RNA sequence: GGGAACGACUCGAGUAGAGUCGAAAACGUUGUCAUCGACAACACCCUAUGCAUUCAUGCUCUGUAAGAAUGCGCCGAAAGGUGAGCAAGCCCGAGUUGCCCAGACCUGAAAUGCAACACUUUAGAGAAAACCCGAAGCAGUUCGCUGCUUCGGGAAGUCAAAGUUAAGGUUCGCCUUAACUUUGACAAAAGAAACAACAACAACAAC
Reactivity to 2A3 in 0.01 (KOAc 150mM, MgCl2 10mM, bicine 150mM(pH8.5), 24C), signal-to-noise 3, nucleotides 027 to 156: c090g000u000u000g020u020c090a220u080c300g030a000c000a000a000c000a050c010c000c000u010a030u090g000c010a000u000u020c030a060u160g000c010u000c000u020g020u000a020a000g000a000a020u010g010c010g000c010c000g060a110a030a020g000g000u020g020a010g010c020a030a010g020c000c020c030g120a080g040u020u040g010c010c020c030a040g050a090c020c010u050g030a070a090a060u080g010c010a070a020c010a050c080u080u160u150a120g010a010g040a080a110a030a050c010c000c000g000a000a000g000c000a000g000u050u140c140g050c120u000g000c000u010u000c000g000g000g000a000a000
Reactivity to DMS in 0.01 (KOAc 150mM, MgCl2 10mM, bicine 150mM(pH8.5), 24C), signal-to-noise 2, nucleotides 027 to 156: c080g000u010u010g030u010c010a150u000c050g000a070c050a030a070c020a220c010c010c010u000a110u010g030c010a020u000u020c000a240u000g020c020u000c040u000g010u000a300a300g010a060a020u000g020c000g030c020c010g010a110a070a160g010g020u000g040a070g000c040a190a250g040c040c060c060g000a130g010u000u010g020c010c030c010a230g000a050c030c040u000g010a070a100a150u010g010c060a110a090c070a120c030u010u010u000a060g010a180g000a090a050a080a140c020c000c000g020a020a050g010c010a070g000u000u020c240g000c000u000g010c010u000u010c000g030g010g000a000a030